[RMDB]
RNA sequence: GGGAACGACUCGAGUAGAGUCGAAAAAAGAAAGUCGUCCAAGAUGCUAAAAAAAAACAUUGCCAAAACUGCCACUGCCUUGGUCGCCGCCGCACUUCUCUGGGCCGGUUCCGCUGCAGCGGAGACCACCAUACGAGUGCUUCGGCACUCGUAUGGUAAAAGAAACAACAACAACAAC
Reactivity to 2A3 in 0.01 (KOAc 150mM, MgCl2 10mM, bicine 150mM(pH8.5), 24C), signal-to-noise 3, nucleotides 027 to 126: a000a000g200a020a040a000g040u050c020g000u040c020c010a000a030g040a050u040g080c020u210a090a000a000a010a000a010a060a020a020c090a120u100u090g010c000c010a080a060a010a090c080u070g010c000c010a000c010u020g010c010c020u040u090g020g010u050c020g000c010c000g020c010c030g050c010a020c020u090u040c050u010c010u150g020g000g000c040c010g040g030u050u010c040c020g000c080u100g040c040a030g010c010g000g010a010g020a030c000c020
Reactivity to DMS in 0.01 (KOAc 150mM, MgCl2 10mM, bicine 150mM(pH8.5), 24C), signal-to-noise 1, nucleotides 027 to 126: a100a040g050a060a090a070g000u000c000g010u000c000c020a080a160g000a030u000g000c060u000a000a000a000a000a130a070a080a100a070c120a010u030u000g050c040c020a020a000a040a170c030u020g000c060c000a050c000u000g010c010c000u000u000g000g000u000c060g020c000c020g000c000c010g020c030a050c110u000u010c060u010c020u000g000g000g000c070c030g030g000u010u020c010c010g000c080u040g000c030a130g010c000g040g010a030g030a070c080c000